RNA sequence: GGGAACGACUCGAGUAGAGUCGAAAAAGACGGAAACGCAUCGACUGUCACCAGAUGCUGCAUCACCUGAUCACUGAUGGCUCAACGGUAUCCGGCGGUACAACUGAAUACUUGUAGCUGCCUUUUGAAAAGGAGUUCAUCUUCGGAUGAACUCCAACUCAACUAUAGUGUUCGCACUAUAGUUGAGAAAAGAAACAACAACAACAAC
Reactivity to DMS in 0.01 (KOAc 150mM, MgCl2 10mM, bicine 150mM(pH8.5), 24C), signal-to-noise 4, nucleotides 027 to 156: a090g000a100c020g010g020a080a080a070c070g010c020a110u000c010g020a120c040u000g010u000c040a130c030c020a060g020a040u000g020c020u000g010c060a140u000c080a030c030c020u000g000a160u000c090a150c080u000g010a080u010g020g030c030u010c020a090a060c030g000g010u000a050u000c020c030g040g030c020g010g000u000a060c080a040a100c070u000g010a080a070u010a050c040u010u010g030u000a100g030c000u000g020c020c100u000u000u000u000g000a050a070a160a210g010g000a040g020u000u010c000a020u000c000u000u000c300g030g000a030u000g030a000a010c000u000c000c000a000a010
Reactivity to 2A3 in 0.01 (KOAc 150mM, MgCl2 10mM, bicine 150mM(pH8.5), 24C), signal-to-noise 9, nucleotides 027 to 156: a000g070a020c050g030g030a060a070a010c070g010c030a040u050c030g090a060c070u100g040u110c040a020c070c020a030g020a050u040g010c040u030g020c020a030u030c010a030c020c020u050g040a060u050c020a010c060u040g020a030u040g070g000c030u030c070a060a060c050g000g030u060a080u070c050c030g000g010c020g030g000u030a020c010a040a010c050u160g080a160a060u110a170c030u020u050g020u040a040g070c010u020g000c010c010u090u130u060u130g100a090a080a030a030g000g000a000g000u000u000c000a000u000c000u030u050c170g080g000a000u000g000a000a000c000u000c000c000a000a000